[RMDB]
An RNA of 207 nucleotides, treated with 2A3 and read out base by base. Conditions: 150 mM KOAc, 10 mM MgCl2 and 150 mM bicine (pH 8.5), 24 C. As a SHAPE reagent, 2A3 marks flexible, mostly unpaired nucleotides at the ribose 2'-OH. The 2A3 profile rests on 293 reads.
RNA sequence: GGGAACGACUCGAGUAGAGUCGAAAAGUCAAUAAAACACUUUAACCAUAUUAGAGGUACUGUGCUUCAAUAUGACUGAUGUGUUCAGUUAAAAUGCUGAAGUUUAUGAAUCUUACCGUAAAGCUUGAAGAAGAACAGUGGAGAUACAUUACAUGCACGCCAUGAUAUGGUUCGCCAUAUCAUGGCGAAAAGAAACAACAACAACAAC
Reactivity to 2A3 in 0.01 (KOAc 150mM, MgCl2 10mM, bicine 150mM(pH8.5), 24C), signal-to-noise 1, nucleotides 027 to 156: g020u040c030a080a090u090a240a090a010a000c030a000c000u120u140u110a220a030c050c020a040u020a040u150u190a100g000a070g000g030u030a070c120u090g060u120g060c000u010u000c000a050a080u060a080u190g000a010c040u030g010a120u010g110u020g040u090u000c000a000g000u020u100a020a130a090a180u160g020c010u000g010a160a070g060u190u270u000a020u030g130a010a000u120c070u030u010a080c030c030g080u080a120a040a000g000c090u110u220g040a060a040g060a070a000g000a070a050c020a080g010u090g040g070a010g000a030u100a000c010a030u000u210a000c000a010u110g110c010a000